The record gives the reactivity of an RNA of 207 nucleotides to 2A3 and DMS. For 2A3, 38,177 sequencing reads were counted. The data come from the RNA Mapping Database (RMDB), library ARCHII. The DMS profile rests on 7,979 reads. Values are in units of 0.01, from 0 to 300, in steps of 10. High DMS reactivity at an A or C suggests that its Watson-Crick edge is free.
RNA sequence: GGGAACGACUCGAGUAGAGUCGAAAAGGAUAUGCUAAACACUGCCGUUUGAAGUCUGUUUAGAAGAAACUUAAUCAAACUAGCAUCAUGUUGGUUGUUUAUCACUUUUCAUGAUGCGAAACCUAUCGAUAAACUACACACGUAGAAAGAUGUGUAUGACCAUACUAUAGUUCGCUAUAGUAUGGUCAAAAGAAACAACAACAACAAC
Reactivity to 2A3 in 0.01 (KOAc 150mM, MgCl2 10mM, bicine 150mM(pH8.5), 24C), signal-to-noise 9, nucleotides 027 to 156: g120g010a120u090a040u230g010c010u010a000a010a000c010a000c010u000g010c010c040g000u000u000u010g010a010a000g000u010c010u010g010u020u000u010a020g020a080a030g090a070a190a020c130u170u140a030a030u050c000a000a000a000c000u000a010g000c000a000u000c000a000u000g010u020u030g030g000u010u020g000u000u010u010a010u010c000a010c010u150u160u050u030c000a000u000g000a000u000g000c000g000a000a000a000c030c050u120a150u190c030g000a000u000a010a010a000c010u020a000c010a000c000a000c020g080u120a060g250a180a100a030g110a210u030g000u000g000u000a030u080
Reactivity to DMS in 0.01 (KOAc 150mM, MgCl2 10mM, bicine 150mM(pH8.5), 24C), signal-to-noise 3, nucleotides 027 to 156: g000g000a130u010a160u000g000c000u000a030a020a030c010a040c040u010g030c020c050g010u010u000u010g020a090a090g020u000c250u000g010u000u000u000a030g010a090a090g020a110a090a050c090u000u020a040a080u010c040a050a070a100c070u010a170g040c020a020u000c000a040u000g000u010u010g010g010u000u010g040u000u010u000a130u020c030a040c030u000u000u010u000c000a020u010g020a030u000g010c000g010a100a050a070c080c040u000a190u000c050g000a090u000a060a060a080c030u000a030c010a030c000a010c000g010u010a200g000a120a080a110g020a040u010g000u000g020u010a100u000